[RMDB]
RNA sequence: GGGAACGACUCGAGUAGAGUCGAAAACGCGUUAUUCGUAACGCGAAAAAACCGUAGGACGACGUAAGGGCAAUGAUGAAUAAACUGGUUCGAAAGAGCCAGUGAAGUUUGAGCCUAUCGUCGUCCUAAACGGAAAAAAGUCCGUUUCGACGGACAACUUGAUAGUGCUAUUCGUAGCACUAUCAAGAAAAGAAACAACAACAACAAC
Reactivity to 2A3 in 0.01 (KOAc 150mM, MgCl2 10mM, bicine 150mM(pH8.5), 24C), signal-to-noise 3, nucleotides 027 to 156: c000g010c000g000u000u020a030u080u140c190g070u090a000a000c010g000c000g060a050a000a000a000a000a000c010c010g020u020a020g000g000a000c000g000a000c010g010u030a110a300g020g010g020c050a090a090u180g040a030u110g000a080a090u060a080a030a030c000u000g010g000u000u000c000g000a050a110a100g000a010g000c000c010a000g000u000g010a080a010g020u000u000u020g010a000g010c000c000u010a030u030c000g000u000c000g000u010c000c000u010a000a000a000c010g030g000a050a010a000a060a010a020g010u020c020c000g010u030u050u170c230g070a000c010g000g010a000c000a000a010
Reactivity to DMS in 0.01 (KOAc 150mM, MgCl2 10mM, bicine 150mM(pH8.5), 24C), signal-to-noise 2, nucleotides 027 to 156: c020g060c010g000u010u010a050u000u000c300g040u010a070a020c000g020c000g000a000a030a020a080a090a070c000c010g030u000a040g030g030a010c000g010a020c000g050u000a120a300g000g020g010c020a080a170u010g000a070u000g000a030a070u010a070a200a030c000u000g000g070u000u000c020g000a130a230a280g000a030g020c000c000a000g020u000g020a070a270g010u010u000u000g000a300g000c000c010u000a180u000c030g010u000c010g030u000c000c000u000a010a030a040c000g000g030a000a060a060a120a080a240g010u000c000c000g020u000u000u000c140g020a090c000g000g020a010c000a040a040